This 177-nucleotide RNA was probed chemically with DMS and 2A3. Values cover nucleotides 27 to 126.
RNA sequence: GGGAACGACUCGAGUAGAGUCGAAAACUAGGAUCGUUCGCGAUCCUAGAAAGGGGCGGCACCGUCCGCGGAACAAACGGCAAAACAAGAAAGUCAGCAUAAAAAUCAUCAGCUUCGGCUGAUGAAACAAUAGAAAUGGCUUCGGCCAUUUCUAUUGAAAAGAAACAACAACAACAAC
Reactivity to DMS in 0.01 (KOAc 150mM, MgCl2 10mM, bicine 150mM(pH8.5), 24C), signal-to-noise 3, nucleotides 027 to 126: c000u000a000g000g000a000u000c010g030u000u000c180g040c030g000a010u000c000c000u000a000g000a020a070a080g020g000g000g020c000g000g020c020a300c020c010g010u010c010c020g000c010g010g010a050a210c100a020a020a010c030g000g000c130a100a060a120a100c210a060a110g000a060a090a110g010u010c060a040g000c100a090u010a020a060a060a080a100u000c000a000u010c010a000g010c010u000u020c220g010g010c000u000g000a000u000g000a010a030a080
Reactivity to 2A3 in 0.01 (KOAc 150mM, MgCl2 10mM, bicine 150mM(pH8.5), 24C), signal-to-noise 3, nucleotides 027 to 126: c000u000a000g000g000a000u000c000g000u070u030c120g000c010g080a010u010c000c000u000a000g000a000a000a000g030g000g050g000c000g000g000c030a000c050c010g140u170c010c000g000c000g100g100a020a010c010a030a040a000c000g010g020c060a010a020a050a120c100a080a050g150a150a050a010g130u130c040a010g030c070a090u200a170a170a020a010a050u020c010a000u000c000a010g000c000u050u100c200g080g000c010u000g000a000u010g000a000a000a000
Description:
It was measured as part of the RMDB library M2PK50.